[RMDB]
RNA sequence: GGGAACGACUCGAGUAGAGUCGAAAAAGCACCAAACAACAGGCUGCAUCCGUAUUCCAGUCAUAGCAACCGACCGAGUCAGACACGUUCACGAACUCUCAAUCAGCAUCCAAAGUCCUACAUGCGCAGACCACGGCCACGGCAAAUAUCAACUCGAAUCCCAAAUACGAUUCGUCGUAUUUGGGAUAAAAGAAACAACAACAACAAC
Reactivity to 2A3 in 0.01 (KOAc 150mM, MgCl2 10mM, bicine 150mM(pH8.5), 24C), signal-to-noise 3, nucleotides 027 to 156: a000g060c020a050c040c000a090a050a020c080a050a010c010a050g010g030c020u020g000c030a030u030c020c010g030u070a110u070u050c020c030a030g050u030c010a080u070a050g030c020a070a090c010c020g050a030c010c020g030a020g030u050c020a010g020a040c020a000c100g040u080u060c030a020c110g080a100a020c030u040c010u030c060a050a090u040c010a050g030c000a020u070c010c020a140a010a000g040u020c000c010u030a050c020a050u080g020c050g020c070a020g010a040c010c020a040c070g040g000c010c000a040c010g030g010c010a010a050a070u120a040u090c050a060a030c030u020c070g090a070
Reactivity to DMS in 0.01 (KOAc 150mM, MgCl2 10mM, bicine 150mM(pH8.5), 24C), signal-to-noise 2, nucleotides 027 to 156: a090g020c030a100c030c020a150a050a090c080a110a120c050a120g010g000c000u010g040c050a090u010c070c030g020u000a100u000u000c020c020a050g000u000c040a120u020a110g010c020a090a040c040c000g000a050c020c020g000a090g010u000c020a090g000a120c040a060c030g000u000u020c090a110c070g010a110a080c050u000c010u000c010a080a070u000c060a130g040c050a070u000c030c050a040a080a110g020u020c030c000u000a080c050a050u000g020c040g030c040a080g010a060c020c010a040c000g010g010c030c030a060c050g010g000c040a030a060a100u000a070u000c050a090a240c030u000c010g000a130
This 207-nucleotide RNA was probed chemically with 2A3 and DMS. Conditions: 150 mM KOAc, 10 mM MgCl2 and 150 mM bicine (pH 8.5), 24 C. Reactivities are rounded to 0.1 and cut off at 0 and 3. The 2A3 profile rests on 2,503 reads. DMS adducts were read by reverse transcription with MarathonRT. For DMS, 2,958 sequencing reads were counted.